[RMDB]
Source information:
An RNA of 207 nucleotides, treated with DMS and 2A3 and read out base by base. It was measured as part of the RMDB library OK3TST. The DMS profile rests on 3,085 reads.
RNA sequence: GGGAACGACUCGAGUAGAGUCGAAAAAGAAGAGGAUGAAGGUGUCUAUCACUGCAAAGCCACCAACCAGAAGGGCUCUGUGGAAAGUUCAGCAUACCUCACUGUUCAAGGUAAACAGCUGCUUAAGAAAGCAACAAGAAAUUGGUCAGACAUCUAAAGGUCAUUUUAAUUUCGAUUAAAAUGACCUAAAAGAAACAACAACAACAAC
Reactivity to DMS in 0.01 (KOAc 150mM, MgCl2 10mM, bicine 150mM(pH8.5), 24C), signal-to-noise 2, nucleotides 027 to 156: a040g030a110a080g010a100g020g020a080u010g060a070a110g050g020u010g000u010c030u010a110u000c030a170c070u010g030c050a050a050a080g040c020c010a300c070c110a070a100c040c080a160g000a110a160g000g040g010c020u020c030u000g070u020g010g010a090a030a150g010u000u020c040a040g000c020a140u010a050c000c030u010c030a110c100u000g010u010u000c090a140a010g030g000u000a040a060a070c050a130g020c010u000g000c020u000u000a100a100g040a110a040a050g020c020a020a100c070a040a110g000a050a110a140u010u010g010g020u000c060a100g060a080c050a090u010c040u000a070a200
Reactivity to 2A3 in 0.01 (KOAc 150mM, MgCl2 10mM, bicine 150mM(pH8.5), 24C), signal-to-noise 3, nucleotides 027 to 156: a010g050a010a000g010a020g040g000a020u050g030a060a030g040g010u010g010u020c030u060a090u060c030a020c060u020g000c040a020a010a030g010c010c000a040c030c010a050a060c020c020a020g040a100a070g070g000g020c010u000c030u090g010u030g020g040a110a040a020g010u040u120c010a000g000c000a000u020a090c000c010u050c030a070c030u070g040u150u060c020a060a020g000g030u020a140a040a100c010a040g010c020u040g000c010u050u030a070a000g050a060a040a010g040c010a000a080c020a060a000g050a080a070a070u070u040g030g030u070c020a010g030a050c010a020u110c060u110a200a040